[RMDB]
RNA sequence: GGGAACGACUCGAGUAGAGUCGAAAACUGGGUACUGCUGGCUUAGAAAGAUUCUCAACCUAAGAUGAACCAAGCAGCUGGGUUGGUGUUCAGAGGAGUACAGGAAAGGCUCCCAGCCCAGGAGCCAUACUACUCCCUCAUUCGUGAGGGAGUAGUAAAAAGAAACAACAACAACAAC
Reactivity to DMS in 0.01 (KOAc 150mM, MgCl2 10mM, bicine 150mM(pH8.5), 24C), signal-to-noise 3, nucleotides 027 to 126: c040u000g000g000g010u000a060c050u010g030c020u000g010g020c030u000u000a040g000a080a160a120g010a130u000u000c050u000c020a090a140c080c020u000a060a050g000a080u010g010a080a160c090c140a080a150g030c020a030g020c050u000g020g000g000u000u000g010g010u000g000u000u000c070a090g020a060g000g000a060g010u010a040c060a180g000g000a090a080a100g010g000c010u000c000c000c040a090g020c000c000c010a190g000g000a010g000c000c000a180
Reactivity to 2A3 in 0.01 (KOAc 150mM, MgCl2 10mM, bicine 150mM(pH8.5), 24C), signal-to-noise 1, nucleotides 027 to 126: c060u020g190g020g050u040a040c030u050g170c010u020g070g000c020u040u040a060g070a060a090a010g110a110u230u010c060u010c070a040a030c000c010u060a090a040g030a110u070g010a070a070c010c030a100a070g090c030a030g060c010u000g040g020g000u000u030g000g060u070g030u070u030c040a050g030a030g100g010a010g040u040a110c010a010g000g130a160a050a000g000g000c000u000c000c010c000a030g010c000c000c000a000g000g020a000g040c010c010a000

Structure probing data (DMS and 2A3) for a 177-nucleotide construct.
Conditions: 150 mM KOAc, 10 mM MgCl2 and 150 mM bicine (pH 8.5), 24 C.
The DMS profile rests on 2,629 reads.
The 2A3 profile rests on 1,203 reads.